[RMDB]
RNA sequence: GGGAACGACUCGAGUAGAGUCGAAAAAAUUGGAUGUUAUGACCGUCCAGAAAAGACAAGAUGAGAAAGUGCAGUAUUGACUGUCUUCAAACGCACCUGUCCUUGCUCAAGUGCUGGGAUUGUGUGCCGUACUGUUGUUGUUCGCAACAACAGUACGAAAAGAAACAACAACAACAAC
Reactivity to 2A3 in 0.01 (KOAc 150mM, MgCl2 10mM, bicine 150mM(pH8.5), 24C), signal-to-noise 4, nucleotides 027 to 126: a000a010u120u050g010g000a010u020g010u140u140a160u230g070a050c020c020g000u000c000c000a010g100a020a110a000a010g030a020c080a070a040g070a140u200g020a010g040a160a070a010g080u160g100c000a000g010u080a150u170u160g150a070c000u000g000u000c000u000u010c030a020a090a100c030g000c010a000c000c000u000g000u000c000c000u040u000g000c010u040c110a180a120g100u030g080c000u020g000g010g000a000u000u040g050u010g000u010g050c000
Reactivity to DMS in 0.01 (KOAc 150mM, MgCl2 10mM, bicine 150mM(pH8.5), 24C), signal-to-noise 3, nucleotides 027 to 126: a080a080u000u010g010g000a020u010g020u000u020a100u010g010a110c260c020g040u000c000c020a080g010a030a070a090a040g000a090c120a110a060g010a120u010g000a160g010a030a020a020g000u000g010c010a040g030u000a170u010u000g010a070c030u000g020u000c040u000u000c080a030a100a070c180g040c000a030c000c030u010g020u000c000c000u000u010g020c010u010c110a100a100g020u000g020c000u020g010g010g000a030u000u000g010u030g010u000g010c020

The record gives the reactivity of an RNA of 177 nucleotides to 2A3 and DMS. Reactivities are given for positions 27 through 126. DMS adducts were read by reverse transcription with MarathonRT. For 2A3, 3,086 sequencing reads were counted.